[RMDB]
RNA sequence: GGGAACGACUCGAGUAGAGUCGAAAAGACCGCAGAAGCGGAAACGGCGAAAACGUUCGGAAGAAUACGCACGAGCGGAAGACUGGAUAGCGACCGAGAGGUCGCAACGCCGAAUCAUCCAGAAGAACAUCAGUAGGUCAUUCGUGACCUACUGAUGAAAAGAAACAACAACAACAAC
Reactivity to 2A3 in 0.01 (KOAc 150mM, MgCl2 10mM, bicine 150mM(pH8.5), 24C), signal-to-noise 7, nucleotides 027 to 126: g040a010c000c000g000c020a090g080a300a040g040c020g010g000a080a020a040c030g000g000c020g040a070a030a040a030c010g000u020u020c010g080g030a110a040g070a150a160u260a160c120g030c090a060c040g010a010g010c010g020g050a040a010g060a050c010u000g000g010a010u020a020g000c000g000a000c010c000g070a060g010a010g100g000u000c000g000c000a000a000c000g000c000c010g010a010a030u120c010a020u000c020c000a010g030a060a020g080a090a030
Reactivity to DMS in 0.01 (KOAc 150mM, MgCl2 10mM, bicine 150mM(pH8.5), 24C), signal-to-noise 4, nucleotides 027 to 126: g010a140c010c000g000c030a130g010a150a120g010c010g010g000a030a090a130c040g010g020c000g000a180a110a050a100c060g000u010u000c000g000g000a160a120g010a150a080u020a090c200g000c260a230c070g020a050g010c000g000g000a090a070g000a170c020u000g000g000a010u010a200g000c000g000a010c000c000g020a110g020a240g010g000u000c000g030c010a010a010c030g000c010c020g020a040a110u060c150a010u000c000c010a020g000a100a060g000a120a180

Chemical mapping of a 177-nucleotide RNA with 2A3 and DMS.
For DMS, 4,897 sequencing reads were counted.
DMS adducts were read by reverse transcription with MarathonRT.
2A3 adducts were read by reverse transcription with SuperScript II with manganese.
Source: RMDB library OK1LIB, as collected in RNAgym.
Reactivities are given for positions 27 through 126.
The 2A3 profile rests on 7,595 reads.